[RMDB]
RNA sequence: GGGAACGACUCGAGUAGAGUCGAAAAACUGUCGUUCGCGACAGUAGACGCCGCGCCGCUGAGAAAAAGCGAAGCGGCACUGCUCUUUAACAAUUUAUCAGACAAUCUGUGUGGGUGUAGACCUGGCGUGUGGCAAGGGUUCACUUUCGAGUGAACCGCUUGUAUUGCGCUUCGGCGCAAUACAAGCAAAAGAAACAACAACAACAAC
Reactivity to 2A3 in 0.01 (KOAc 150mM, MgCl2 10mM, bicine 150mM(pH8.5), 24C), signal-to-noise 2, nucleotides 027 to 156: a000c010u010g000u000c010g010u080u090c230g030c000g140a000c010a000g000u010a010g030a010c060g020c020c000g030c020g020c010c030g030c010u010g020a060g110a140a200a140a010a000g050c010g020a070a000g000c000g000g010c000a000c010u020g030c000u020c000u080u030u080a100a090c090a090a140u060u160u220a120u150c050a060g040a150c080a110a040u090c040u070g050u000g000u010g080g000g020u070g010u050a030g050a060c000c030u000g060g010c070g010u030g000u040g040g030c070a090a060g030g000g000u030u000c000a010c000u060u100u130c160g070a030g000u010g000a000a000c000c000